[RMDB]
Chemical mapping of a 177-nucleotide RNA with DMS and 2A3. The DMS profile rests on 4,002 reads.

RNA sequence: GGGAACGACUCGAGUAGAGUCGAAAACAAGUAUCCGCCCGCCAGUGAAUACGCCUUCUAAAUCAUCACCGAUCAAAGAGAGCUGGCAUCAAGCACACACUCUAAGUGUAGCUCAUGACGUCUCGCCCGAUACUUUGGAUUUCGAUCCAAAGUAUCGAAAAGAAACAACAACAACAAC
Reactivity to DMS in 0.01 (KOAc 150mM, MgCl2 10mM, bicine 150mM(pH8.5), 24C), signal-to-noise 4, nucleotides 027 to 126: c080a050a120g010u010a060u000c030c030g010c040c030c050g000c070c050a080g010u000g000a100a070u010a060c080g000c040c020u000u010c040u010a080a110a070u000c040a040u000c070a100c080c060g000a090u010c110a040a090a090g000a110g000a090g010c040u010g010g000c040a040u010c050a050a040g020c020a090c070a020c030a080c110u000c160u010a020a090g030u000g020u000a070g010c010u000c130a070u000g000a040c050g000u000c010u000c070g000c090c080
Reactivity to 2A3 in 0.01 (KOAc 150mM, MgCl2 10mM, bicine 150mM(pH8.5), 24C), signal-to-noise 4, nucleotides 027 to 126: c010a000a060g050u050a110u050c020c000g000c020c030c020g020c000c010a030g020u030g120a120a040u090a090c050g040c040c020u070u040c030u120a090a120a070u060c040a020u050c020a040c030c030g050a040u070c070a070a130a040g080a020g000a010g030c030u060g010g000c020a040u060c020a030a000g000c010a010c010a010c000a000c050u140c050u170a150a140g000u010g000u050a030g000c010u020c050a070u070g020a010c020g020u010c020u020c040g040c000c030
The reactions ran in a buffer of 150 mM KOAc, 10 mM MgCl2 and 150 mM bicine (pH 8.5), at 24 C.